[RMDB]
RNA sequence: GGGAACGACUCGAGUAGAGUCGAAAAGAUAUGGACCGCAAGUCUCCGAUAAGCUGUGGUUCGGAAACGAACCCAGCUUUUGACGGAGUCACCGGUCCUAAGUCAAAGAACGUCUUCGGACGUUCAAGACUAUUACCUGCUUCGGCAGGUAAUAGUCAAAAGAAACAACAACAACAAC
Reactivity to DMS in 0.01 (KOAc 150mM, MgCl2 10mM, bicine 150mM(pH8.5), 24C), signal-to-noise 3, nucleotides 027 to 126: g010a060u000a300u000g010g000a010c000c000g020c210a110a170g000u000c000u000c010c010g000a200u000a030a000g020c010u000g010u030g010g010u000u000c000g000g000a080a080a170c010g020a030a020c000c010c010a010g000c010u000u000u000u010g000a230c120g000g000a020g010u000c060a080c300c000g010g000u000c010c000u000a000a050g020u000c040a090a150a180g000a000a010c000g010u000c000u000u020c270g040g000a010c000g010u000u000c010a050a160
Reactivity to 2A3 in 0.01 (KOAc 150mM, MgCl2 10mM, bicine 150mM(pH8.5), 24C), signal-to-noise 2, nucleotides 027 to 126: g040a010u050a020u120g010g000a000c000c000g010c050a140a300g040u020c010u010c000c000g150a160u060a190a010g030c030u020g300u300g190g000u010u010c000g000g020a050a060a010c020g000a030a000c000c000c000a000g000c000u010u000u000u020g010a040c000g010g020a000g000u030c030a040c090c000g020g000u000c000c000u000a070a030g050u060c040a150a090a070g000a010a000c000g010u000c010u040u080c300g140g010a000c000g000u000u010c000a010a020